[RMDB]
RNA sequence: GGGAACGACUCGAGUAGAGUCGAAAAACAAAGCUGGAGGCAGCAGGCAACCUGACUUCAAACUAUACUGCAAGUUUACAGUAACCAAAACUGCUUGGUACUGGUACCAAAACAGAGAUAUAGACCAAUGGAACAGAACAGUGCCCUCAGAAAUAAAGAUAGGGAGUGAGUUCGCUCACUCCCUAUCAAAAGAAACAACAACAACAAC
Reactivity to 2A3 in 0.01 (KOAc 150mM, MgCl2 10mM, bicine 150mM(pH8.5), 24C), signal-to-noise 1, nucleotides 027 to 156: a000c060a000a030a010g020c030u060g040g040a020g080g010c010a000g000c020a020g150g000c040a120a010c030c010u010g050a050c020u030u040c050a070a050a000c020u000a020u040a090c030u070g130c090a180a040g000u000u000u020a050c020a000g050u050a160a150c050c000a000a020a070a120c040u170g150c030u050u000g000g000u000a000c020u010g000g050u030a080c060c070a010a020a020a000c030a000g060a000g000a050u000a000u040a110g080a050c020c000a000a040u110g010g010a080a010c020a050g020a050a000c000a020g030u020g120c030c000c000u050c000a000g050a000a100a000u140a020a100a000
About this RNA:
Structure probing data (2A3) for a 207-nucleotide construct. Source: RMDB library OK3TST, as collected in RNAgym. For 2A3 the reverse transcriptase was SuperScript II with manganese.